[RMDB]
RNA sequence: GGGAACGACUCGAGUAGAGUCGAAAAAGGAUGGUAAAGUACUCAAUUAUGAGGGACUACCAACCCAGUGCCUGAAUCAGGCCGUGAAAGAGAGGAAGCUACCAUGCAUGGCAGCAGGGCAGGUGAGUAUUCUGUAUAAGUUCGCUUAUACAGAAUAAAAAGAAACAACAACAACAAC
Reactivity to DMS in 0.01 (KOAc 150mM, MgCl2 10mM, bicine 150mM(pH8.5), 24C), signal-to-noise 9, nucleotides 027 to 126: a090g010g010a140u000g010g000u000a020a070a100g010u020a140c000u000c000a080a180u010u010a120u000g010a030g000g000g010a080c080u000a040c020c020a030a120c020c000c030a130g010u010g010c010c010u000g000a110a100u010c080a060g010g010c020c050g020u010g010a060a070a090g000a100g010a080g010g000a100a090g000c050u000a050c060c050a070u010g010c070a070u010g000g010c050a050g010c060a060g000g000g010c040a030g000g000u000g000a100g010
Reactivity to 2A3 in 0.01 (KOAc 150mM, MgCl2 10mM, bicine 150mM(pH8.5), 24C), signal-to-noise 9, nucleotides 027 to 126: a000g080g000a080u070g000g000u060a120a090a070g020u030a030c000u000c020a050a250u300u110a170u300g010a030g010g020g050a020c020u050a060c020c000a010a050c020c010c000a030g070u060g090c000c000u050g080a070a100u160c020a050g050g000c010c010g040u080g120a120a100a030g140a020g000a010g040g040a080a020g020c020u050a070c020c020a030u100g020c020a020u050g040g000c020a020g000c030a030g020g020g000c010a010g000g050u060g020a040g040